This 177-nucleotide RNA was probed chemically with DMS and 2A3.
RNA sequence: GGGAACGACUCGAGUAGAGUCGAAAAGAGGGGCGACGACGAGCUGCGAGCAAAGAUGUGCCCCGGGACCCCCGGCACCUUCCAGUGGAUUUCCUUGCGGAAAGGAUGUUGGCGGUCCCUGUGACCUCCACAAGUCUAAUUUCGAUUAGACUUGUGGAAAAGAAACAACAACAACAAC
Reactivity to DMS in 0.01 (KOAc 150mM, MgCl2 10mM, bicine 150mM(pH8.5), 24C), signal-to-noise 4, nucleotides 027 to 126: g020a130g030g010g000g020c010g040a060c050g010a080c050g000a300g020c040u000g010c160g010a130g000c000a040a110a110g000a090u020g020u000g000c010c000c000c020g020g010g000a030c010c000c080c000c020g010g020c000a010c000c010u000u000c010c000a140g010u000g010g010a300u010u020u010c040c000u040u030g030c140g010g000a020a020a030g000g010a070u010g030u000u000g010g040c300g000g000u000c000c000c000u020g010u020g000a180c060c010u000
Reactivity to 2A3 in 0.01 (KOAc 150mM, MgCl2 10mM, bicine 150mM(pH8.5), 24C), signal-to-noise 9, nucleotides 027 to 126: g110a050g010g010g010g000c060g060a060c010g020a020c010g010a060g010c010u100g050c130g130a170g020c040a050a180a040g060a060u100g020u050g030c010c000c000c000g000g000g010a010c000c020c000c000c000g000g000c000a000c000c010u010u010c010c010a100g040u080g060g060a150u100u110u270c040c030u100u220g060c080g020g020a090a050a060g040g010a120u000g000u000u010g000g010c000g000g000u000c000c000c000u010g040u050g020a020c000c000u010